[RMDB]
RNA sequence: GGGAACGACUCGAGUAGAGUCGAAAAGUCGAGGAAGGAGUCUCUGUGGAGGGCCUGGACAAGGCCAGCAUCUCAAAGAAGUUGGAAGAGCUUGUGAAGAAGGGCGAAAGCAUGCCACGGUCGACAGAUACAAGGUCACGUUCGCGUGACCUUGUAUAAAAGAAACAACAACAACAAC
Reactivity to DMS in 0.01 (KOAc 150mM, MgCl2 10mM, bicine 150mM(pH8.5), 24C), signal-to-noise 2, nucleotides 027 to 126: g020u010c090g020a100g020g010a040a030g000g000a100g020u010c040u010c030u010g020u020g010g020a080g020g010g020c040c010u000g000g040a100c160a100a020g020g010c010c010a070g000c070a080u000c020u010c080a050a120a110g000a040a060g010u010u010g000g020a090a090g010a090g000c080u010u010g010u010g020a080a050g010a050a080g000g010g020c080g000a100a070a070g010c100a060u000g000c000c050a050c040g000g020u000c060g010a100c170a070g000